Structure probing data (DMS and 2A3) for a 207-nucleotide construct. For DMS, 2,097 sequencing reads were counted. Source: RMDB library RNAMAK, as collected in RNAgym. Values cover nucleotides 27 to 156. For DMS the reverse transcriptase was MarathonRT. The 2A3 profile rests on 3,106 reads.
RNA sequence: GGGAACGACUCGAGUAGAGUCGAAAAGACCGUGUUCGCACGGUCAAAAAAGAUAUGGAACCGAAGCAGCUUGGAUUUAACUCGUAGCUCGGAAACGAGCACACGAGUUUGUCAGCUGUUAGGUUCCUAAGUCAAAAAAGCACUGUUCGCAGUGCAAGGUUCUUAGAAGUUUCGACUUCUAAGAACCAAAAGAAACAACAACAACAAC
Reactivity to DMS in 0.01 (KOAc 150mM, MgCl2 10mM, bicine 150mM(pH8.5), 24C), signal-to-noise 1, nucleotides 027 to 156: g000a000c000c000g020u000g020u000u000c280g030c020a030c060g060g000u040c000a000a010a080a130a040a070g020a060u000a290u000g020g030a010a000c000c000g020a250a260g030c000a020g010c000u000u010g080g010a020u020u010u000a030a030c000u020c000g050u000a230g020c000u000c010g050g030a140a140a200c030g050a030g040c040a100c080a050c000g010a010g010u010u000u010g040u000c020a030g010c000u000g020u000u030a100g000g010u000u000c000c000u000a000a030g010u010c020a000a060a090a130a060a220g020c030a010c010u000g020u000u000c300g020c000a040g000u010g000c000a060a090
Reactivity to 2A3 in 0.01 (KOAc 150mM, MgCl2 10mM, bicine 150mM(pH8.5), 24C), signal-to-noise 3, nucleotides 027 to 156: g010a000c010c010g010u000g020u010u070c220g050c120a010c010g000g000u020c020a000a010a000a000a000a010g040a010u070a010u090g000g000a000a000c020c010g030a050a000g000c010a010g000c010u170u300g100g000a080u300u240u160a040a010c000u000c000g000u010a010g010c000u000c000g000g030a010a100a040c010g000a000g000c030a020c000a000c070g000a010g000u000u000u000g010u000c000a000g040c000u000g020u110u000a010g000g000u010u000c000c000u000a000a000g000u000c000a070a000a000a000a110a030g070c070a000c050u050g010u070u140c170g010c140a010g000u000g000c010a000a040